[RMDB]
RNA sequence: GGGAACGACUCGAGUAGAGUCGAAAAGCAGAAUGGACUAUGCGAUCCAAUACCUCGAAGCCUAGUUUGACCGUCCAAGAGAUGAUCGAAACAGGUGAGUGGAUCGCGUUACGUAAUCAUUGGAGAGAUCACCCAGAUGAUAUGCCAAUAAUGAAUCCUAGUUCAUGCAUUUCGAUGCAUGAACUAGAAAAGAAACAACAACAACAAC
Reactivity to DMS in 0.01 (KOAc 150mM, MgCl2 10mM, bicine 150mM(pH8.5), 24C), signal-to-noise 2, nucleotides 027 to 156: g030c030a140g020a070a050u000g020g020a070c100u000a010u000g040c010g000a010u020c000c000a110a110u020a170c150c040u010c050g000a130a300g000c000c010u000a050g020u000u000u000g030a060c000c000g030u000c020c010a180a240g010a300g010a000u000g030a010u000c000g040a010a020a050c030a030g020g020u000g000a140g030u000g010g000a010u000c000g020c020g010u030u000a060c070g060u000a120a050u000c040a060u000u000g020g010a160g020a160g030a090u010c060a080c030c030c130a250g030a130u010g000a070u010a050u000g020c060c050a000a070u000a070a110u000g030a120a180u000c020
Reactivity to 2A3 in 0.01 (KOAc 150mM, MgCl2 10mM, bicine 150mM(pH8.5), 24C), signal-to-noise 6, nucleotides 027 to 156: g060c030a010g050a160a060u090g000g030a030c030u080a040u090g000c000g010a000u000c000c010a060a040u160a240c030c030u060c070g080a130a020g000c000c000u050a070g010u000u000u010g010a010c010c020g010u000c030c040a160a040g060a030g000a040u030g000a040u030c080g080a000a010a030c000a000g020g000u130g060a030g030u040g000g000a000u000c010g010c000g010u010u020a020c060g030u070a060a040u060c030a020u000u050g040g000a070g000a010g010a060u090c030a050c040c020c010a020g040a110u080g010a010u040a040u190g060c020c020a010a070u180a080a040u260g070a070a030u100c030